[RMDB]
RNA sequence: GGGAACGACUCGAGUAGAGUCGAAAACGCACCUUCGGGUGCGAAAAAUCCUAAGUCGUCUCGAGGUCGAUGACAUGAUGCGACAUCGGAAACGAUGUCCAUCAACAGCAUCGACUCCCCACCGAGACGAUAUGGAAAAAAUGCGGUUCGCCGCAAAAGCAAUAUCAUAGUUCGCUAUGAUAUUGCUAAAAGAAACAACAACAACAAC
Reactivity to DMS in 0.01 (KOAc 150mM, MgCl2 10mM, bicine 150mM(pH8.5), 24C), signal-to-noise 3, nucleotides 027 to 156: c020g000c010a020c000c010u040u000c300g060g060g010u000g000c000g050a000a020a050a170a090u000c010c000u000a140a190g040u000c000g000u000c000u000c000g040a300g020g000u010c000g020a020u010g010a090c060a300u000g010a000u000g030c040g000a020c010a010u000c000g010g000a190a100a300c000g010a000u010g000u000c000c000a010u000c000a020a050c060a130g000c000a030u000c010g010a050c000u000c110c080c030c040a300c230c000g060a010g000a060c000g000a050u010a070u010g010g010a000a000a080a050a110a130u010g040c000g000g000u000u000c260g050c030c010g000c000a010a030a070
Reactivity to 2A3 in 0.01 (KOAc 150mM, MgCl2 10mM, bicine 150mM(pH8.5), 24C), signal-to-noise 6, nucleotides 027 to 156: c010g010c010a010c010c000u040u060c230g140g000g000u010g000c000g000a010a000a010a000a010u040c010c000u050a120a040g010u000c000g000u000c000u000c000g020a010g010g010u000c010g000a010u010g030a100c030a100u050g010a000u010g040c200g010a000c000a000u000c000g040g030a100a050a030c030g000a000u000g000u000c000c000a000u000c000a000a030c090a010g030c000a000u000c000g000a000c000u030c020c000c000c010a040c020c010g000a000g000a000c000g000a000u010a030u040g000g080a030a010a030a040a010a050u110g000c020g010g040u040u070c220g050c080c010g000c040a050a100a030